[RMDB]
RNA sequence: GGGAACGACUCGAGUAGAGUCGAAAACCUAAUCUUUCGAGAUUAGGAAAAGCGUACUACCCAAACUAUGACUAGUCACAACAGCGGAUCCCAAAUAGGAUCCGACAUGUGACAUCAUAGCACUGGGUAUCGCAAAAUGUUUGCUUUCGAGCAAACACUGAAAUCCUGUCUUCGGACAGGAUUUCAGAAAAGAAACAACAACAACAAC
Reactivity to 2A3 in 0.01 (KOAc 150mM, MgCl2 10mM, bicine 150mM(pH8.5), 24C), signal-to-noise 2, nucleotides 027 to 156: c000c010u000a000a000u000c000u080u150u200c300g160a000g000a040u010u010a020g010g000a140a220a060a000g020c040g020u060a110c020u020a000c050c000c000a030a030a000c020u000a040u020g000a010c090u230a080g020u000c000a000c030a050a080c000a120g100c020g000g000a000u010c040c090c100a170a300a070u300a170g010g000a000u000c000c000g020a080c010a040u030g000u000g000a000c000a000u000c000a000u000a000g030c050a060c070u050g000g000g000u020a060u210c000g020c000a050a080a030a050u040g010u000u000u000g020c000u200u070u170c280g010a000g030c040a000a000a000c020a000